Background:
Conditions: 150 mM KOAc, 10 mM MgCl2 and 150 mM bicine (pH 8.5), 24 C. Chemical mapping of a 207-nucleotide RNA with DMS and 2A3. For DMS the reverse transcriptase was MarathonRT. Reactivities are rounded to 0.1 and cut off at 0 and 3.
[RMDB]
RNA sequence: GGGAACGACUCGAGUAGAGUCGAAAAGUACGCACGAGGAUGGGAAAGCAUGCAGUGCAUCUCAGUGAAUGGCAUGCGAAAGGAUGGUCGUCGCUGAUCGCCAUCCGAAACGUACGUGCGUAGCUCCGGAUGGGAAAGCAUGCAGCUUCAUCUGUCAAACGUAAGAUGCUUUCGAGCAUCUUACGUUAAAAGAAACAACAACAACAAC
Reactivity to DMS in 0.01 (KOAc 150mM, MgCl2 10mM, bicine 150mM(pH8.5), 24C), signal-to-noise 2, nucleotides 027 to 156: g000u000a030c020g040c030a020c000g060a270g030g010a170u000g000g030g000a180a140a290g030c010a020u000g000c010a090g010u010g010c000a040u000c190u000c220a200g000u020g030a070a100u000g000g010c000a050u000g030c000g050a090a130a180g000g000a060u020g010g020u010c170g000u000c110g040c120u000g000a030u020c050g010c000c000a020u000c000c000g010a060a070a020c080g030u000a150c000g020u000g010c070g050u000a080g000c010u010c060c040g040g020a110u010g010g030g010a140a030a060g020c020a130u010g000c060a190g000c010u000u000c090a110u020c030u000g000u000c060a080
Reactivity to 2A3 in 0.01 (KOAc 150mM, MgCl2 10mM, bicine 150mM(pH8.5), 24C), signal-to-noise 3, nucleotides 027 to 156: g010u010a000c000g010c000a000c010g030a040g050g040a020u140g070g000g030a110a000a000g000c000a000u030g000c040a030g080u040g210c050a100u110c110u060c130a190g030u080g140a120a100u140g070g000c000a000u050g010c140g120a130a000a020g000g000a000u020g030g060u100c070g020u010c020g120c300u120g050a080u100c080g000c010c000a000u020c000c000g020a020a020a000c070g000u110a030c000g000u000g000c000g000u000a010g000c000u000c030c030g020g000a000u020g000g000g060a050a050a070g000c020a020u300g010c020a030g010c020u090u050c010a030u000c000u070g070u120c080a070